The record gives the reactivity of an RNA of 177 nucleotides to 2A3 and DMS. The reactions ran in a buffer of 150 mM KOAc, 10 mM MgCl2 and 150 mM bicine (pH 8.5), at 24 C. DMS adducts were read by reverse transcription with MarathonRT.
RNA sequence: GGGAACGACUCGAGUAGAGUCGAAAAAGAUGCUGCUUACGAGCAGCAUCAAUGUCAAUGAUGAAUAAAAUACAGACAAGCAUAUGUCUGAAUCUUAUGUGUUGCCAUCUUAAUUUUCUGAGAAAAACACGUACGAUAUUUUCGAAUAUCGUACGUGAAAAGAAACAACAACAACAAC
Reactivity to 2A3 in 0.01 (KOAc 150mM, MgCl2 10mM, bicine 150mM(pH8.5), 24C), signal-to-noise 5, nucleotides 027 to 126: a010g000a000u000g000c010u000g010c000u080u040a060c240g100a020g000c000a000g000c000a000u010c000a010a010u030g040u030c010a020a070u090g060a060u110g070a080a030u120a160a060a020a000u150a050c020a010g010a000c000a040a100g150c110a200u210a080u230g010u000c000u010g000a030a040u000c020u020u080a110u090g080u020g010u030u040g020c050c010a040u000c050u100u170a200a200u120u100u090u000c080u110g100a090g100a100a030a010a000a040
Reactivity to DMS in 0.01 (KOAc 150mM, MgCl2 10mM, bicine 150mM(pH8.5), 24C), signal-to-noise 5, nucleotides 027 to 126: a090g000a020u000g000c000u000g010c000u000u000a130c200g030a040g020c000a010g020c000a000u000c000a030a040u000g010u010c050a040a040u010g000a100u030g010a110a010u010a000a000a030a030u000a110c020a030g000a010c000a020a190g010c260a130u030a080u000g000u000c010u000g000a100a020u000c050u010u000a020u000g010u020g010u000u000g000c060c030a050u010c090u020u020a060a070u020u000u000u010c020u020g000a150g020a050a060a060a070a210
It was measured as part of the RMDB libraries RFM100 and RFMREP.